Description:
The record gives the reactivity of an RNA of 207 nucleotides to DMS and 2A3. The RNA was probed in 150 mM KOAc, 10 mM MgCl2 and 150 mM bicine (pH 8.5) at 24 C. Reactivities are given for positions 27 through 156. The 2A3 profile rests on 9,672 reads. For DMS the reverse transcriptase was MarathonRT.
[RMDB]
RNA sequence: GGGAACGACUCGAGUAGAGUCGAAAACGUAGUCUACCUUCGGGUAGACUACGGAGCAUGUCGAGAGACAUGCCAGUCAUACGCCUCGCCCGCCCCUGGUGAGGGCACGCGUUCCUUCCAGCCUGGGACGUUGUAUGACAUGGGGCACGGCUGGUAAAUACUAUCGAUAUUUCGAUAUCGAUAGUAUAAAAGAAACAACAACAACAAC
Reactivity to DMS in 0.01 (KOAc 150mM, MgCl2 10mM, bicine 150mM(pH8.5), 24C), signal-to-noise 3, nucleotides 027 to 156: c000g010u000a000g010u000c000u000a000c010c000u000u000c300g070g000g030u000a010g010a000c000u010a010c010g000g000a050g040c010a010u000g020u000c000g010a300g010a300g010a020c000a000u000g020c000c020a060g010u000c040a050u000a050c030g000c040c010u000c030g010c010c030c050g030c040c030c030c090u000g020g040u000g000a070g000g020g020c050a050c170g010c050g010u000u000c010c010u010u000c030c010a080g030c010c000u000g010g020g000a020c020g000u010u030g050u000a050u000g000a070c040a100u000g000g010g020g030c090a060c100g000g020c000u000g030g000u000a100a140
Reactivity to 2A3 in 0.01 (KOAc 150mM, MgCl2 10mM, bicine 150mM(pH8.5), 24C), signal-to-noise 5, nucleotides 027 to 156: c000g000u010a000g000u000c000u000a000c010c010u030u090c260g100g000g000u000a000g000a000c000u000a000c000g000g000a010g000c000a010u000g010u000c010g020a010g000a000g010a110c000a000u000g010c000c000a000g000u020c000a010u010a030c020g050c000c000u010c000g000c010c000c010g080c010c010c000c020u030g000g000u020g000a050g010g010g020c020a030c100g030c000g020u030u020c010c000u120u060c000c010a000g000c000c000u010g000g000g000a010c000g020u060u110g010u030a020u030g010a010c080a190u070g010g010g060g010c040a030c070g000g000c010u000g000g010u020a070a130